[RMDB]
RNA sequence: GGGAACGACUCGAGUAGAGUCGAAAAAGUACUUGCUCAUUAUCUCCGGGCCGUUGAUAGCAAUGAAGUAUGCAUCUGUCUCGUUAGCUAUCGCUUUGGCUAGCAACGUCUUGCCUACACCGGGAGGACUUACACCGGGUUUCGACCCGGUGUAAGUAAAAGAAACAACAACAACAAC
Reactivity to 2A3 in 0.01 (KOAc 150mM, MgCl2 10mM, bicine 150mM(pH8.5), 24C), signal-to-noise 2, nucleotides 027 to 126: a010g090u050a070c030u050u050g060c000u020c070a130u080u260a120u100c040u000c010c010g040g000g000c030c040g080u100u190g000a000u000a000g000c000a010a030u080g050a150a000g060u220a080u230g060c060a190u060c120u230g060u070c010u020c000g010u000u000a010g030c020u020a000u040c030g000c070u110u110u110g060g030c000u030a000g000c030a100a120c070g050u020c020u000u010g010c000c010u060a050c020a060c080c010g080g040g000a020g070g020
Reactivity to DMS in 0.01 (KOAc 150mM, MgCl2 10mM, bicine 150mM(pH8.5), 24C), signal-to-noise 2, nucleotides 027 to 126: a020g030u000a060c110u010u000g000c010u010c100a150u000u000a070u010c030u000c030c040g000g000g010c070c040g000u000u010g000a020u000a010g030c030a040a030u000g010a090a100g020u000a040u000g010c180a120u010c140u000g020u010c030u000c030g010u000u010a130g000c000u000a020u000c030g030c240u000u040u010g020g020c010u040a030g000c010a050a010c160g000u000c030u000u000g030c040c020u010a080c240a080c050c000g000g000g010a200g000g020